[RMDB]
Chemical mapping of a 177-nucleotide RNA with DMS and 2A3.
RNA sequence: GGGAACGACUCGAGUAGAGUCGAAAAAGUGUAAGCGAUGAUUUAGGACAUCAUGACGGACUUGUUAAAAGAUGUAUUGAUGAUUUAACACCUAGCGUUAAAACAAACGAUUAUGACUUUGAAGAAGUCGUACGGAAUCAUUCGUGAUUCCGUACGAAAAAGAAACAACAACAACAAC
Reactivity to DMS in 0.01 (KOAc 150mM, MgCl2 10mM, bicine 150mM(pH8.5), 24C), signal-to-noise 3, nucleotides 027 to 126: a070g010u000g010u000a060a100g020c040g010a090u000g000a100u010u000u000a070g010g020a170c110a050u000c010a050u000g010a080c100g010g020a150c080u010u010g010u010u000a070a030a040a060g000a190u000g020u000a090u000u020g010a110u000g010a120u000u000u000a000a030c270a030c060c050u010a070g010c040g010u000u000a030a080a060a070c160a040a070a060c060g000a030u010u020a030u000g010a040c020u000u000u000g010a110a090g000a080a070g010
Reactivity to 2A3 in 0.01 (KOAc 150mM, MgCl2 10mM, bicine 150mM(pH8.5), 24C), signal-to-noise 2, nucleotides 027 to 126: a020g090u060g010u110a050a000g030c040g010a050u060g000a030u090u040u100a060g000g040a020c010a000u020c010a000u040g070a010c040g000g050a050c070u080u070g040u090u230a100a070a000a000g100a060u030g020u060a080u030u090g050a070u030g010a050u090u100u140a070a020c010a020c050c020u020a030g060c030g050u020u070a050a070a000a040c050a020a090a000c010g020a000u000u100a030u110g160a000c030u010u000u110g060a090a090g070a100a020g080